[RMDB]
This 177-nucleotide RNA was probed chemically with DMS and 2A3. For DMS the reverse transcriptase was MarathonRT. The DMS profile rests on 1,889 reads. As a SHAPE reagent, 2A3 marks flexible, mostly unpaired nucleotides at the ribose 2'-OH. It was measured as part of the RMDB library OK2TRN.
RNA sequence: GGGAACGACUCGAGUAGAGUCGAAAACAGGUCAGAAAGAAGCGGCUUGGAGCCCCAUUUAUAUCUUUAACAUCGGGAGAAUCAUCCGUCGACCUUGUGGCACGGUUUGCCGGCGCGAAUAGGGUGGUCUAAGAGGGACUUUCGAGUCCCUCUUAGAAAAAGAAACAACAACAACAAC
Reactivity to DMS in 0.01 (KOAc 150mM, MgCl2 10mM, bicine 150mM(pH8.5), 24C), signal-to-noise 2, nucleotides 027 to 126: c030a080g030g020u000c020a140g030a090a150a130g010a140a170g010c080g000g000c060u010u000g020g000a080g010c050c010c010c040a070u010u020u010a070u000a060u000c070u000u000u010a100a080c180a060u000c120g000g000g000a110g010a110a080u000c080a060u010c030c020g030u000c030g000a080c030c030u000u000g010u000g020g050c020a050c100g000g000u000u000u000g020c030c020g000g010c100g040c070g010a030a080u000a080g010g010g020u000g010g020
Reactivity to 2A3 in 0.01 (KOAc 150mM, MgCl2 10mM, bicine 150mM(pH8.5), 24C), signal-to-noise 1, nucleotides 027 to 126: c000a000g020g040u000c020a050g220a170a300a060g100a060a070g040c050g020g000c030u010u000g010g120a110g000c000c020c010c010a020u030u210u000a150u010a020u160c020u010u120u090a150a050c080a030u030c040g090g040g030a020g100a090a230u030c050a050u000c070c000g070u050c060g100a070c010c040u000u130g060u080g060g000c060a040c070g000g000u050u140u140g090c000c040g020g000c060g010c000g010a000a000u040a140g050g040g000u050g020g030